Record summary:
Chemical mapping of a 177-nucleotide RNA with 2A3 and DMS. Reactivities are given for positions 27 through 126. Conditions: 150 mM KOAc, 10 mM MgCl2 and 150 mM bicine (pH 8.5), 24 C. The data come from the RNA Mapping Database (RMDB), library OK2TST.
RNA sequence: GGGAACGACUCGAGUAGAGUCGAAAAGCGCAAAAUUCGGCACGCCUCGGAACAGGAUAUCCUCGCCGUCGGUCAGCGUAUCGCCGAUGCGCAGCGUGCCAUGGAUUGGAAUGCCGACCACGUCGCAGUCCCUUUUAGGCUUCGGCCUAAAAGGGACAAAAGAAACAACAACAACAAC
Reactivity to 2A3 in 0.01 (KOAc 150mM, MgCl2 10mM, bicine 150mM(pH8.5), 24C), signal-to-noise 2, nucleotides 027 to 126: g040c020g070c040a050a000a000a060u050u030c010g030g000c000a000c020g000c000c010u130c070g070g020a090a040c020a170g140g040a110u070a130u270c010c010u070c010g000c010c000g010u040c040g010g010u090c050a110g020c100g170u120a130u170c060g000c020c010g000a000u010g030c130g000c040a000g000c000g020u060g000c000c000a030u050g030g000a010u010u020g060g060a130a040u070g030c000c010g050a030c000c010a060c070g180u130c050g000c040a040
Reactivity to DMS in 0.01 (KOAc 150mM, MgCl2 10mM, bicine 150mM(pH8.5), 24C), signal-to-noise 2, nucleotides 027 to 126: g000c030g050c060a080a060a030a060u000u000c060g010g000c020a020c110g010c010c090u000c270g030g000a080a110c190a090g000g000a250u000a170u000c020c020u030c170g030c020c010g020u010c020g000g010u000c250a100g030c160g000u000a040u010c180g010c050c020g010a020u010g000c080g010c040a140g000c020g000u000g000c030c030a070u010g040g000a050u000u000g020g010a080a190u000g000c000c010g020a110c020c010a080c220g010u020c030g000c190a120